[RMDB]
About this RNA
Source: RMDB libraries RFM100 and RFMREP, as collected in RNAgym. Chemical mapping of a 177-nucleotide RNA with DMS and 2A3. DMS adducts were read by reverse transcription with MarathonRT. The reactions ran in a buffer of 150 mM KOAc, 10 mM MgCl2 and 150 mM bicine (pH 8.5), at 24 C.

RNA sequence: GGGAACGACUCGAGUAGAGUCGAAAAGAGUUGCAGAUGGCGCAGGCCUCCCUUCCUCCUCAAGGAAGCCAAAGACACCAUCACAAUCAGGCAGCCAGGAGCCAGGGCUUCCAUAGGCCCAGCUCUGAGAUACUAAAGAUUUCGAUCUUUAGUAUCUAAAAGAAACAACAACAACAAC
Reactivity to DMS in 0.01 (KOAc 150mM, MgCl2 10mM, bicine 150mM(pH8.5), 24C), signal-to-noise 9, nucleotides 027 to 126: g010a120g020u000u000g010c050a110g010a040u010g000g010c060g030c070a200g010g000c020c020u010c040c030c030u000u010c050c030u000c060c050u010c140a110a090g010g010a070a070g010c030c040a060a100a090g000a160c060a060c020c010a040u010c040a120c090a060a080u020c120a080g010g010c030a040g000c020c050a130g010g010a020g000c000c050a110g000g000g010c010u000u010c140c130a120u030a080g000g000c010c010c000a270g010c010u000c000u000g000
Reactivity to 2A3 in 0.01 (KOAc 150mM, MgCl2 10mM, bicine 150mM(pH8.5), 24C), signal-to-noise 9, nucleotides 027 to 126: g070a010g010u050u040g000c040a020g010a060u020g020g000c040g000c060a040g020g040c010c010u070c020c000c000u030u060c010c030u040c000c010u100c050a020a020g020g000a030a020g010c010c020a110a140a020g050a040c020a020c030c000a020u030c010a010c040a060a120u140c060a040g110g000c010a000g020c010c020a040g020g010a010g000c040c080a160g020g000g000c010u130u050c110c020a080u150a080g030g000c000c000c000a000g000c000u000c010u020g030